[RMDB]
RNA sequence: GGGAACGACUCGAGUAGAGUCGAAAAUCGCGGUAUGUCCGACCAGGCACAUGUGGUUGAGCGAAUUACCCGCAUUGAUGAGAACACUCUUGAUUACGACUUCACAGUGACUGAUCCUCUUUCCUGGUCCAUUGAGGCUAUUCGUAGCCUCAAUGGAAAAAGAAACAACAACAACAAC
Reactivity to 2A3 in 0.01 (KOAc 150mM, MgCl2 10mM, bicine 150mM(pH8.5), 24C), signal-to-noise 3, nucleotides 027 to 126: u030c000g000c020g040g000u130a080u200g050u080c020c000g010a050c010c000a050g060g070c070a050c040a180u180g040u060g060g040u030u050g040a040g030c080g030a060a040u100u050a070c020c020c000g030c030a050u030u210g060a100u080g020a050g020a100a010c040a040c060u030c000u070u060g030a060u110u120a060c060g040a070c040u060u070c080a020c000a070g050u060g060a070c040u030g030a070u010c010c000u030c040u000u030u050c000c020u060g060g000
Reactivity to DMS in 0.01 (KOAc 150mM, MgCl2 10mM, bicine 150mM(pH8.5), 24C), signal-to-noise 3, nucleotides 027 to 126: u000c050g020c020g010g010u010a040u000g000u010c020c040g020a050c030c050a070g010g010c100a100c110a070u010g010u000g020g010u000u000g010a070g020c050g010a080a090u000u010a110c120c030c040g010c100a090u010u010g010a100u000g020a090g010a090a090c130a070c090u010c020u000u010g010a100u000u010a060c100g000a050c070u000u000c030a040c150a080g010u000g000a070c060u000g000a060u000c010c020u010c070u000u000u010c010c010u000g000g010
Conditions: 150 mM KOAc, 10 mM MgCl2 and 150 mM bicine (pH 8.5), 24 C. Structure probing data (2A3 and DMS) for a 177-nucleotide construct. The 2A3 profile rests on 3,249 reads. Values cover nucleotides 27 to 126.